[RMDB]
RNA sequence: GGGAACGACUCGAGUAGAGUCGAAAAUAGAAUUUGGAAUAUUGUCUUGCCUCUUGGAGAUAAUAUGGAAUGAAUUAUUAAGUUCAUUACUGAAAAUUGGAAGUUGUGCUGGAGGCCACACAUGUAACAUGCGAUACUGGUUCGCCAGUAUCGCAUGAAAAGAAACAACAACAACAAC
Reactivity to DMS in 0.01 (KOAc 150mM, MgCl2 10mM, bicine 150mM(pH8.5), 24C), signal-to-noise 1, nucleotides 027 to 126: u010a090g040a120a160u000u000u000g010g030a250a020u000a000u010u000g010u000c010u000u000g020c020c000u000c030u030u010g010g000a020g000a030u000a040a030u000a010u000g010g000a040a010u000g020a030a010u000u000a180u010u020a060a140g010u000u010c010a010u000u010a280c060u010g000a060a020a020a090u000u010g010g030a090a150g010u060u010g030u000g000c070u000g020g000a040g000g000c020c040a000c040a050c150a110u020g000u000a060a160